[RMDB]
RNA sequence: GGGAACGACUCGAGUAGAGUCGAAAAUAUACAUAAGAAGUCAGCACAGCUCCCGACUCGCGGUGUGCGAUGCUACGUCGCGCGAGCGACGUAGCGGCUGUGCAGACGGCUAGCAAAAGCUAGCCAAGCGAUACCAGUAGUUCGCUACUGGUAUCGCAAAAGAAACAACAACAACAAC
Reactivity to 2A3 in 0.01 (KOAc 150mM, MgCl2 10mM, bicine 150mM(pH8.5), 24C), signal-to-noise 2, nucleotides 027 to 126: u100a000u010a020c050a060u230a120a120g190a140a030g010u000c000a000g000c010a000c000a000g000c000u030c000c020c050g090a030c020u020c020g030c000g140g300u300g140u210g200c010g010a010u060g000c010u010a000c020g000u000c000g010c000g000c090g070a050g000c030g000a000c000g020u000a000g000c000g010g000c000u000g000u000g000c000a000g000a000c000g000g000c000u010a000g000c010a110a160a300a030g010c010u000a010g000c010c000a030a010
The data come from the RNA Mapping Database (RMDB), library OK1LIB. Chemical mapping of a 177-nucleotide RNA with 2A3. 2A3 adducts were read by reverse transcription with SuperScript II with manganese.